[RMDB]
RNA sequence: GGGAACGACUCGAGUAGAGUCGAAAACAGUAGAAUUGGUAAUAAACAAACACUACGUACUCGUAGUGGAAAAUCUAUAGGUGCUAAGGUACAUUAUUAUUAUGAUUUAAGUACUAUUGAUCCUGCAACUGUUGGGUUUCUUCGGAAACCCAACAGUAAAAGAAACAACAACAACAAC
Reactivity to 2A3 in 0.01 (KOAc 150mM, MgCl2 10mM, bicine 150mM(pH8.5), 24C), signal-to-noise 1, nucleotides 027 to 126: c000a030g090u110a050g090a210a020u050u090g150g000u140a000a140u100a250a160a060c030a120a070a000c000a000c000u000a030c000g110u210a050c090u070c260g000u000a000g060u070g050g020a000a200a000a000u130c210u100a050u120a070g000g000u000g000c000u020a030a030g210g040u070a070c000a000u000u150a050u140u000a090u050u000a020u300g060a050u000u130u000a150a040g000u020a050c000u000a050u160u000g100a090u160c000c050u060g000c090a150